Structure probing data (DMS and 2A3) for a 177-nucleotide construct.
The data come from the RNA Mapping Database (RMDB), library OK2TRN.
The reactions ran in a buffer of 150 mM KOAc, 10 mM MgCl2 and 150 mM bicine (pH 8.5), at 24 C.
2A3 adducts were read by reverse transcription with SuperScript II with manganese.
The 2A3 profile rests on 4,545 reads.
[RMDB]
RNA sequence: GGGAACGACUCGAGUAGAGUCGAAAAUAUCUGCAUCUUGAAGACUGCACAAGACAAGAUUAUGUCAUAUGUGAUGUGGUAAAGAUAGUGCAGCCUUGUGGCAAUAGCUCAGACACGAGUGAUUGUCGAAUAGGUCAGAGUUCGCUCUGACCUAUUCAAAAGAAACAACAACAACAAC
Reactivity to DMS in 0.01 (KOAc 150mM, MgCl2 10mM, bicine 150mM(pH8.5), 24C), signal-to-noise 4, nucleotides 027 to 126: u020a070u020c020u000g000c020a040u010c030u010u000g010a190a100g010a020c010u000g020c000a020c000a100a100g000a050c060a040a180g000a170u000u000a130u000g010u000c000a100u020a160u000g000u000g000a090u000g010u000g000g000u000a050a060a070g000a120u000a040g010u000g000c020a010g000c070c020u000u020g020u000g010g000c020a010a010u000a190g010c000u010c000a130g010a130c300a140c200g010a030g020u000g010a060u010u000g010u000c010
Reactivity to 2A3 in 0.01 (KOAc 150mM, MgCl2 10mM, bicine 150mM(pH8.5), 24C), signal-to-noise 4, nucleotides 027 to 126: u180a070u020c010u010g000c000a020u060c050u010u010g020a040a010g040a020c040u070g000c020a010c010a040a040g010a010c020a070a050g060a300u220u190a140u240g020u010c030a060u120a120u300g070u040g040a190u100g020u040g030g000u010a060a090a000g030a020u050a020g050u010g000c000a010g000c000c000u170u170g160u170g000g000c000a000a010u010a040g000c010u020c010a050g020a290c050a020c300g000a010g010u020g020a030u020u000g010u020c080